Structure probing data (DMS and 2A3) for a 207-nucleotide construct. DMS adducts were read by reverse transcription with MarathonRT. The RNA was probed in 150 mM KOAc, 10 mM MgCl2 and 150 mM bicine (pH 8.5) at 24 C. 2A3 is a SHAPE reagent: it acylates the 2'-hydroxyl of flexible nucleotides of all four kinds. For 2A3 the reverse transcriptase was SuperScript II with manganese.
[RMDB]
RNA sequence: GGGAACGACUCGAGUAGAGUCGAAAACAUUUUCCAAUCUGGACUCGUAUAUGUGAAAGAGCUGUUCACGAGAUCAGCAGUUUGAGCCAGCCUGACCAACACGGUGAAACCCCGUCUCUACUAAUAAUACAAAAAUUAGCCGGGAAUGGUGGUGCAAGCACCCUAAUUAGUUCGCUAAUUAGGGUGCAAAAGAAACAACAACAACAAC
Reactivity to DMS in 0.01 (KOAc 150mM, MgCl2 10mM, bicine 150mM(pH8.5), 24C), signal-to-noise 1, nucleotides 027 to 156: c080a110u000u000u010u000c000c040a100a130u030c100u010g000g000a130c020u010c040g040u010a140u000a080u010g030u000g000a080a080a060g000a080g030c000u000g000u000u000c020a140c080g030a130g040a060u000c000a030g000c000a120g000u000u030u000g000a090g020c030c010a070g010c060c010u000g000a030c060c020a080a070c090a070c030g010g000u010g000a060a080a100c030c000c000c020g030u000c010u010c020u000a030c000u000a040a040u000a080a090u000a250c090a000a090a090a050a070u020u000a030g000c000c070g070g010g000a080a080u000g010g000u000g000g020u000g000c070a100a140
Reactivity to 2A3 in 0.01 (KOAc 150mM, MgCl2 10mM, bicine 150mM(pH8.5), 24C), signal-to-noise 2, nucleotides 027 to 156: c020a060u060u060u020u020c010c000a010a110u040c010u040g020g030a110c010u000c070g060u160a110u020a050u220g130u060g130a100a080a070g080a010g040c040u050g010u080u040c060a040c100g030a030g000a170u030c030a000g030c020a000g030u050u080u120g020a000g000c000c000a030g040c000c010u040g050a050c010c000a030a020c030a000c090g000g000u050g040a060a050a010c000c000c000c010g020u010c010u030c000u000a050c000u000a020a020u050a090a010u110a080c070a080a040a010a000a020u060u030a030g000c030c010g000g000g000a040a040u020g010g090u040g000g010u020g020c020a000a080